[RMDB]
RNA sequence: GGGAACGACUCGAGUAGAGUCGAAAAUAAUAUGCAUAUCGAGUUCCCAUGUAUUUUCGUAGCCCUGCGGCUGUAACAUUACUGCUUAGUAAGAAUGCUACCUAACGAUAGCUAGCCGCAGGAUUAAUAGUGUUCACUCUUUCGAGAGUGAACACUAAAAAGAAACAACAACAACAAC
Reactivity to DMS in 0.01 (KOAc 150mM, MgCl2 10mM, bicine 150mM(pH8.5), 24C), signal-to-noise 1, nucleotides 027 to 126: u010a130a030u010a060u010g000c110a070u000a060u000c050g010a220g010u000u010c000c000c010a140u010g010u000a030u000u010u010u000c080g000u000a110g000c100c010c030u000g000c040g000g000c000u000g030u000a060a120c160a120u010u000a020c020u000g010c170u030u000a020g000u010a010a010g000a040a100u030g020c000u010a010c020c010u000a120a180c170g000a030u030a020g000c010u000a030g020c010c000g020c030a010g010g000a020u010u000a060a080